Chemical mapping of a 177-nucleotide RNA with DMS. The reactions ran in a buffer of 150 mM KOAc, 10 mM MgCl2 and 150 mM bicine (pH 8.5), at 24 C.
[RMDB]
RNA sequence: GGGAACGACUCGAGUAGAGUCGAAAAUGGCCCUCGGCGCCGGCGGCCUCCUACCUCCCUUGGCCGGCCGGCGUGCUGGCGGUGCCGGGGGACUAGCGUAGCCGUUAGGCCGAGCGCGUGCUCGACACGCCAUAUAUGCCUUCGGGCAUAUAUGGCGAAAAGAAACAACAACAACAAC
Reactivity to DMS in 0.01 (KOAc 150mM, MgCl2 10mM, bicine 150mM(pH8.5), 24C), signal-to-noise 2, nucleotides 027 to 126: u010g000g010c000c010c000u000c000g010g000c000g050c020c010g000g010c060g000g020c000c040u000c030c020u000a250c040c070u000c020c000c030u010u000g010g060c050c030g000g010c010c020g030g030c250g000u010g020c000u000g010g010c020g040g000u020g000c000c000g000g000g010g020g010a040c050u000a080g010c100g000u000a140g000c070c010g000u000u020a130g010g010c040c040g000a070g030c060g010c240g040u020g030c030u000c020g020a090c090a190